RNA sequence: GGGAACGACUCGAGUAGAGUCGAAAAAGGAACCUGGAGUUUUUUGACAUUGAAAACAUACGUGGCUCCAAUGGCAGUGCGUCUGGAGACAUGAGGGCACUUGAUAGAUACGAUAAUUAUCUGAAGAUGCUACGAUUAGUUUCGACUAAUCGUAGCAAAAAGAAACAACAACAACAAC
Reactivity to DMS in 0.01 (KOAc 150mM, MgCl2 10mM, bicine 150mM(pH8.5), 24C), signal-to-noise 1, nucleotides 027 to 126: a070g000g010a070a060c050c020u000g010g010a050g020u000u000u010u030u000u000g020a090c120a070u000u000g010a070a060a040a050c060a100u000a180c080g010u010g010g030c010u000c000c010a080a110u000g020g000c000a120g010u000g000c090g030u000c040u010g000g000a100g000a080c070a040u010g000a080g000g020g000c040a040c050u000u010g000a080u010a010g000a030u000a020c110g000a090u000a070a050u030u000a060u000c010u030g000a070a130g000a140
Overview: An RNA of 177 nucleotides, treated with DMS and read out base by base. The RNA was probed in 150 mM KOAc, 10 mM MgCl2 and 150 mM bicine (pH 8.5) at 24 C. The data come from the RNA Mapping Database (RMDB), library OK2TST.